Overview:
Conditions: 150 mM KOAc, 10 mM MgCl2 and 150 mM bicine (pH 8.5), 24 C. Structure probing data (2A3 and DMS) for a 177-nucleotide construct. Source: RMDB library TTRDES, as collected in RNAgym. For 2A3 the reverse transcriptase was SuperScript II with manganese.
RNA sequence: GGGAACGACUCGAGUAGAGUCGAAAAGAUAUGGACGAUGUGUAGGGAGAUCGACGGUUCGGAAACGAACCCAAGAUCAUCGAUCUACACCGCUCGUCCUAAGUCAAAACCUAGGUUCGCCUAGGAACAGUAGUCAAAUGUUCGCAUUUGACUACUGAAAAGAAACAACAACAACAAC
Reactivity to 2A3 in 0.01 (KOAc 150mM, MgCl2 10mM, bicine 150mM(pH8.5), 24C), signal-to-noise 3, nucleotides 027 to 126: g040a030u070a070u200g000g000a000c000g000a030u300g010u010g000u020a000g000g000g030a030g010a010u000c000g030a040c020g000g000u000u000c000g020g020a080a080a060c010g000a000a010c000c020c010a020a020g000a020u000c000a040u220c020g010a040u040c010u000a000c000a000c000c000g010c010u000c000g000u000c000c000u020a090a020g050u010c020a000a030a080a230c010c000u000a010g010g020u040u070c300g090c070c000u010a000g020g000a020a000
Reactivity to DMS in 0.01 (KOAc 150mM, MgCl2 10mM, bicine 150mM(pH8.5), 24C), signal-to-noise 5, nucleotides 027 to 126: g000a050u000a300u010g000g000a000c010g020a010u020g000u010g010u000a000g000g010g020a040g000a000u000c010g010a300c300g010g010u000u000c010g010g000a120a120a220c000g000a010a010c000c000c000a040a300g000a010u010c010a130u000c210g000a070u010c000u000a000c000a000c010c050g020c030u000c000g000u000c000c000u000a010a060g000u000c040a120a070a110a150c010c000u000a000g010g000u000u010c290g040c000c000u030a000g000g010a100a100